[RMDB]
RNA sequence: GGGAACGACUCGAGUAGAGUCGAAAAGGGGUCGACAGCUCUGGGGAGAAAAGGGAGGAUCGGAUGGGAAGAGUAUAUCCCAUGGGAAUCCCUGGGUUCCCCUCGUGUCCAGCCCCUCCCCGGUCCGUAAGCGUCGAGUUCGCUCGACGCAAAAGAAACAACAACAACAAC
Reactivity to DMS in 0.01 (KOAc 150mM, MgCl2 10mM, bicine 150mM(pH8.5), 24C), signal-to-noise 2, nucleotides 027 to 129: g000g030g020g030u030c300g000a030c070a050g010c100u070c130u070g040g010g030g040a030g050a050a050a120a040g000g040g030a040g070g000a240u000c000g020g040a040u030g020g000g040a020a120g020a210g110u000a000u110a040u010c000c050c000a030u020g010g020g000a300a120u040c000c000c000u020g000g060g000u080u010c010c030c000c080u010c160g040u040g000u020c020c080a220g040c010c020c010c040u040c010c030c020c110g010g050u030c080c040g010u030a050a050
Reactivity to 2A3 in 0.01 (KOAc 150mM, MgCl2 10mM, bicine 150mM(pH8.5), 24C), signal-to-noise 4, nucleotides 027 to 129: g030g000g020g000u110c040g010a010c000a050g080c060u050c080u060g000g000g010g000a020g050a010a060a000a000g060g000g000a000g010g030a040u030c010g100g070a010u020g020g040g000a050a010g070a060g190u200a070u040a030u110c000c000c000a000u020g070g030g000a020a050u020c010c020c000u000g080g020g000u100u020c010c000c000c000u000c000g000u000g020u010c000c000a040g010c000c010c000c010u030c000c000c000c000g020g050u040c030c050g020u090a120a020
Structure probing data (DMS and 2A3) for a 170-nucleotide construct. For DMS, 9,010 sequencing reads were counted. The 2A3 profile rests on 8,007 reads. Reactivities are given for positions 27 through 129. The reactions ran in a buffer of 150 mM KOAc, 10 mM MgCl2 and 150 mM bicine (pH 8.5), at 24 C. High 2A3 reactivity points to a flexible backbone, as in loops and unpaired stretches. 2A3 adducts were read by reverse transcription with SuperScript II with manganese.